[RMDB]
RNA sequence: GGGAACGACUCGAGUAGAGUCGAAAAGCAUCGACGACGGUCGUGCCAUGAGACCGUAACGAGGACAUGUCGCCUCGAAUGGCGUCGGGGAGCCGGCAGCUUACCCCAAGGAUGAGCGCCUAAUGCCUAUACCCGAUUCGCUUCGGCGAAUCGGGAAGUUAAUUCACGCUUUCGAGCGUGAAUUAACAAAAGAAACAACAACAACAAC
Reactivity to 2A3 in 0.01 (KOAc 150mM, MgCl2 10mM, bicine 150mM(pH8.5), 24C), signal-to-noise 2, nucleotides 027 to 156: g100c000a020u070c050g050a050c010g030a000c000g000g000u020c000g050u090g080c010c020a040u170g040a010g020a020c000c010g000u040a020a050c030g000a000g010g000a010c050a120u180g040u130c070g020c000c020u020c040g050a050a040u130g010g020c000g010u060c060g000g000g000g010a000g010c030c090g110g000c000a010g010c000u080u200a300c010c010c000c030a040a050g050g030a140u110g010a010g000c000g060c000c010u140a150a090u110g020c000c000u090a070u070a060c000c000c000g000a000u040u010c000g010c010u000u020c100g080g010c000g030a000a000u020c000g020g000g000a000a000
The record gives the reactivity of an RNA of 207 nucleotides to 2A3.
The reactions ran in a buffer of 150 mM KOAc, 10 mM MgCl2 and 150 mM bicine (pH 8.5), at 24 C.
High 2A3 reactivity points to a flexible backbone, as in loops and unpaired stretches.
2A3 adducts were read by reverse transcription with SuperScript II with manganese.